Chemical mapping of a 177-nucleotide RNA with 2A3 and DMS. The RNA was probed in 150 mM KOAc, 10 mM MgCl2 and 150 mM bicine (pH 8.5) at 24 C.

RNA sequence: GGGAACGACUCGAGUAGAGUCGAAAAUGAUCUCAAUGCUGUCUGGCUGGACAUUUGCCAAAGCCCAUGAACGCCCUACCAGACACUGUUGAGACAAAUAUGGGCUUUAAUUGAACGCUUUACAGAACACCUUCAUGAAGUUCGCUUCAUGAAGGUGAAAAGAAACAACAACAACAAC
Reactivity to 2A3 in 0.01 (KOAc 150mM, MgCl2 10mM, bicine 150mM(pH8.5), 24C), signal-to-noise 6, nucleotides 027 to 126: u120g100a180u010c000u000c000a010a010u060g040c040u020g000u000c000u000g000g030c000u040g000g030a060c040a130u060u100u170g100c040c040a040a040a030g030c020c000c000a080u090g070a060a020c070g020c000c000c000u000a030c000c000a000g000a010c000a010c060u030g030u010u010g010a010g010a000c030a000a060a010u190a030u060g020g000g000c000u070u060u100a160a100u110u240g080a050a010c040g030c060u080u080u110a100c080a050g020a080a000
Reactivity to DMS in 0.01 (KOAc 150mM, MgCl2 10mM, bicine 150mM(pH8.5), 24C), signal-to-noise 3, nucleotides 027 to 126: u010g000a080u000c010u000c010a040a010u010g030c260u000g020u000c000u000g000g020c070u000g010g000a040c030a150u000u020u030g000c160c070a090a070a120g000c040c060c030a070u020g000a080a090c100g000c000c000c000u000a160c010c000a010g000a030c010a000c110u010g040u000u000g010a000g000a000c020a060a070a080u040a100u000g000g000g000c010u000u010u010a150a090u040u020g000a070a090c120g000c040u000u010u000a090c100a090g040a150a150